[RMDB]
RNA sequence: GGGAACGACUCGAGUAGAGUCGAAAAAUAAUUCAGAGCUCUGUGGUAUUACAGAUGGGCUGGGAGCAGGCCCGUUUGAUACAUCUGCUUACAGCAGUUCUUGGGCAACGCCACAAGCAGAUUGAAACACCGGAACAUAAUUCGUUAUGUUCCGGUGAAAAGAAACAACAACAACAAC
Reactivity to DMS in 0.01 (KOAc 150mM, MgCl2 10mM, bicine 150mM(pH8.5), 24C), signal-to-noise 3, nucleotides 027 to 126: a120u030a090a130u010u000c040a070g010a270g020c010u000c170u010g020u000g010g020u000a110u000u000a150c010a040g010a030u000g000g030g010c000u010g010g020g010a060g010c120a090g000g000c220c030c050g000u000u000u000g020a140u020a030c110a060u000c000u010g020c010u010u000a110c160a110g000c030a050g020u000u010c030u000u020g040g010g010c100a040a040c150g000c020c020a040c060a030a030g020c020a020g000a160u000u000g000a070a080a200
Reactivity to 2A3 in 0.01 (KOAc 150mM, MgCl2 10mM, bicine 150mM(pH8.5), 24C), signal-to-noise 2, nucleotides 027 to 126: a000u060a010a060u070u000c010a020g020a010g130c000u040c100u090g010u030g000g060u100a070u150u130a120c020a010g040a030u010g020g010g060c010u040g030g050g050a100g070c040a050g040g050c010c020c010g000u020u050u070g070a060u060a110c020a040u010c010u000g010c020u080u110a070c040a070g000c010a030g030u040u060c000u070u070g040g010g030c040a040a020c090g010c020c010a010c010a020a000g000c000a010g030a100u110u100g040a080a070a020
This 177-nucleotide RNA was probed chemically with DMS and 2A3. High 2A3 reactivity points to a flexible backbone, as in loops and unpaired stretches.